[RMDB]
This 207-nucleotide RNA was probed chemically with 2A3. The data come from the RNA Mapping Database (RMDB), library OK3TST.
RNA sequence: GGGAACGACUCGAGUAGAGUCGAAAAGAGAGCGGCCUGGAGGUGUGCUCGCAGCUCCUGCAGAUGCUGCGUCGCCUGUGCGGAGUGUCUCCGGUAGCCUGCCAAGAGGCGUACGUCGAGGGAACGACGUGCGCCCAAUGCUACGAGGAGCUGACUAGGAAAGUUGUACAUUCGUGUACAACUUUCCAAAAGAAACAACAACAACAAC
Reactivity to 2A3 in 0.01 (KOAc 150mM, MgCl2 10mM, bicine 150mM(pH8.5), 24C), signal-to-noise 1, nucleotides 027 to 156: g120a000g000a010g000c030g030g010c050c020u190g210g050a100g010g010u100g070u190g010c040u030c040g000c010a000g010c020u020c000c020u040g030c020a010g000a020u040g010c000u020g070c010g000u060c040g010c030c060u150g050u110g000c010g000g060a030g000u030g010u030c000u060c030c000g030g000u000a000g000c000c050u100g080c040c010a040a060g060a100g040g000c000g000u000a000c000g010u000c000g030a160g010g160g000a070a130c000g000a000c000g000u000g010c000g000c000c000c000a010a010u010g010c000u030a010c040g030a030g000g000a000g000c010u010g000a080c070u080a050